The data come from the RNA Mapping Database (RMDB), library OK3TST.
Structure probing data (2A3 and DMS) for a 207-nucleotide construct.
For DMS the reverse transcriptase was MarathonRT.

[RMDB]
RNA sequence: GGGAACGACUCGAGUAGAGUCGAAAAGGAAGACCCCCCUGAAGGUGGAUCAGCUCGCAAAGGUCGCCGUAUGGCUCGAUGUGCCAAUCACCACCCUAUGGGUAGGCAUUGAGCAGCCAGAAUAAAAAAUAUGCCCGGAGCGUACCUAAACAGGUACGCUGAUGUGAUCCUUCGGGAUCACAUCAGCAAAAGAAACAACAACAACAAC
Reactivity to 2A3 in 0.01 (KOAc 150mM, MgCl2 10mM, bicine 150mM(pH8.5), 24C), signal-to-noise 2, nucleotides 027 to 156: g080g020a090a120g200a130c010c000c010c020c000c010u050g040a080a030g010g020u070g010g000a020u040c020a050g000c040u090c080g060c100a150a090a040g000g000u070c020g010c020c010g030u050a080u040g010g000c000u000c010g010a020u060g000u020g040c000c010a070a020u130c080a130c080c000a060c060c040c000u120a140u240g040g000g000u040a060g020g000c010a000u000u080g030a050g040c080a000g000c000c000a020g050a040a030u160a010a040a030a010a000a010u160a030u140g020c040c000c030g040g010a050g000c000g040u000a020c000c000u090a170a180a030c050a020g060g000u020a000c040
Reactivity to DMS in 0.01 (KOAc 150mM, MgCl2 10mM, bicine 150mM(pH8.5), 24C), signal-to-noise 3, nucleotides 027 to 156: g000g030a120a160g000a260c000c000c020c010c010c020u000g000a060a080g000g040u010g000g000a060u000c020a120g010c010u020c020g010c070a060a090a110g020g020u000c010g020c030c010g020u000a080u010g020g000c020u000c010g010a160u000g050u000g010c020c030a050a100u000c050a050c020c030a060c050c060c040u000a120u000g020g020g020u000a130g000g000c030a030u010u000g000a240g000c050a100g020c010c010a080g010a080a110u020a020a030a060a090a050a150u000a120u000g000c000c030c010g040g010a150g020c010g010u000a000c000c010u000a080a080a110c170a060g000g010u000a000c010